[RMDB]
RNA sequence: GGGAACGACUCGAGUAGAGUCGAAAAAACAGAAAAGAAGAGGAGAAUGCUAAGCAGAUCCUCCAGCGGUUGUGGGGCACCCAGGAUGUAUCCCAAGACAUCCAGGAGAUGAAAGAUGAGAGUGCAACUCUCGCGUACUAUUCGUAGUACGCGAGAGAAAAGAAACAACAACAACAAC
Reactivity to DMS in 0.01 (KOAc 150mM, MgCl2 10mM, bicine 150mM(pH8.5), 24C), signal-to-noise 1, nucleotides 027 to 126: a080a060c090a140g000a050a060a040a120g020a130a070g000a020g000g000a020g010a160a060u000g000c030u000a100a150g030c040a060g020a230u010c030c000u010c010c040a040g020c120g020g010u000u020g030u000g020g010g020g030c050a060c040c010c030a070g040g020a010u000g010u000a030u010c010c000c000a130a060g000a030c010a000u000c010c010a120g000g020a100g020a150u000g000a080a040a120g010a060u010g000a060g040a060g000u000g000c160a120a170